RNA sequence: GGGAACGACUCGAGUAGAGUCGAAAACAAACCGCGCCAUUACAAUUACUGUUUUAACGUAUCACUAACAACAAUCUUAUUUUUUGGCCAGCGCGGCCUCAAUCUCAGGAAUUGUAAAAUCGCCACUAAGAUACUUAUCACGCGAUGCUAGAUAGUCCCUACGGAUCCUUUUCGAAGGAUCCGUAGGAAAAGAAACAACAACAACAAC
Reactivity to 2A3 in 0.01 (KOAc 150mM, MgCl2 10mM, bicine 150mM(pH8.5), 24C), signal-to-noise 2, nucleotides 027 to 156: c010a010a080a000c010c010g010c000g060c030c040a070u060u050a030c010a030a030u100u010a090c020u030g110u130u080u020u060a050a020c030g110u110a060u130c110a070c110u100a180a070c100a020a030c020a110a040u050c010u040u090a120u060u190u030u060u060u120g010g020c010c000a000g120c080g120c130g080g000c000c000u020c020a040a030u040c050u000c040a000g060g000a060a050u000u000g010u020a000a050a080a030u070c010g000c000c000a000c030u100a100a030g030a090u120a140c090u130u130a100u220c110a060c030g000c060g050a010u120g060c020u000a010g110a070u120a040g160u230c160

Conditions: 150 mM KOAc, 10 mM MgCl2 and 150 mM bicine (pH 8.5), 24 C. Chemical mapping of a 207-nucleotide RNA with 2A3. High 2A3 reactivity points to a flexible backbone, as in loops and unpaired stretches.